[RMDB]
RNA sequence: GGGAACGACUCGAGUAGAGUCGAAAAGCAGUUUCACUCACGAUAGACUCUUCAGGAAGAGUGUCAGUAUUGCUUCCUCAAGCAAUACAUUACGGUAUGCCAAUACUGUAAUUGACAGCAGAUUGGCAUCUGCUCUAUCUGAUGAAACUGGUGAGUCACUAGGAGUAAUCUUCGGAUUACUCCUAGUAAAAGAAACAACAACAACAAC
Reactivity to DMS in 0.01 (KOAc 150mM, MgCl2 10mM, bicine 150mM(pH8.5), 24C), signal-to-noise 3, nucleotides 027 to 156: g000c000a050g030u000u010u000c010a030c090u040c020a060c170g020a040u000a020g000a090c010u010c010u000u000c080a290g010g020a110a050g040a020g030u000g000u020c030a270g010u000a010u000u010g020c000u000u000c100c190u000c150a050a060g020c010a030a020u000a000c010a300u000u000a000c000g010g020u000a000u000g000c240c280a120a050u000a020c000u000g010u010a030a080u010u010g000a040c040a040g030c000a020g010a070u000u010g020g030c160a280u000c010u000g010c010u010c010u000a010u000c000u000g000a090u000g000a030a010a010c010u000g000g030u000g000a130g000u000c110
Reactivity to 2A3 in 0.01 (KOAc 150mM, MgCl2 10mM, bicine 150mM(pH8.5), 24C), signal-to-noise 8, nucleotides 027 to 156: g060c000a010g000u000u010u010c040a060c090u010c010a020c160g000a010u010a010g010a010c010u020c010u070u070c200a170g140g200a050a020g010a000g010u010g010u010c010a010g000u000a000u000u000g000c000u060u050c040c060u150c110a010a010g000c000a000a000u000a010c010a010u030u040a010c010g000g000u030a000u020g170c060c020a040a010u030a060c020u000g010u040a030a070u070u150g030a020c020a010g000c000a000g010a070u100u200g140g020c030a020u010c000u020g000c000u000c000u000a000u000c000u000g000a010u000g000a000a010a000c000u000g010g090u080g040a050g100u100c060